[RMDB]
RNA sequence: GGGAACGACUCGAGUAGAGUCGAAAACAUGGAGUCUUCGGACUCCAUGCACUACCGAAAUAAUGCCUCGGUUUAAAAGGCAAACCCUUGGAAACAAGGGAACGAUGUCACGAUUCGUCGUGACAAAUAAUUCGAUAACGUUCGCGUUAUCGAAUUAAAAAGAAACAACAACAACAAC
Reactivity to DMS in 0.01 (KOAc 150mM, MgCl2 10mM, bicine 150mM(pH8.5), 24C), signal-to-noise 3, nucleotides 027 to 126: c000a000u000g000g000a020g010u000c000u000u020c210g040g000a010c000u000c000c000a000u000g000c080a190c030u000a060c000c000g010a060a110a110u010a100a130u000g010c010c010u010c010g000g000u000u010u020a010a040a050a020g000g020c000a030a070a140c010c000c000u000u000g000g010a150a110a190c000a010a000g010g000g020a060a030c200g000a120u010g010u000c010a010c000g000a020u000u000c180g020u000c000g000u000g000a000c000a020a060a060
Reactivity to 2A3 in 0.01 (KOAc 150mM, MgCl2 10mM, bicine 150mM(pH8.5), 24C), signal-to-noise 2, nucleotides 027 to 126: c000a000u010g000g000a010g000u020c010u080u060c280g080g010a010c000u000c000c000a000u000g000c010a010c030u040a010c000c000g030a060a060a030u180a060a040u090g000c000c000u010c010g030g000u000u080u160a030a040a010a000g000g000c000a020a030a130c010c000c000u000u000g020g010a050a020a040c000a000a000g000g000g010a000a010c060g080a050u130g010u000c000a000c000g020a030u040u060c160g060u030c000g000u080g000a010c000a000a010a000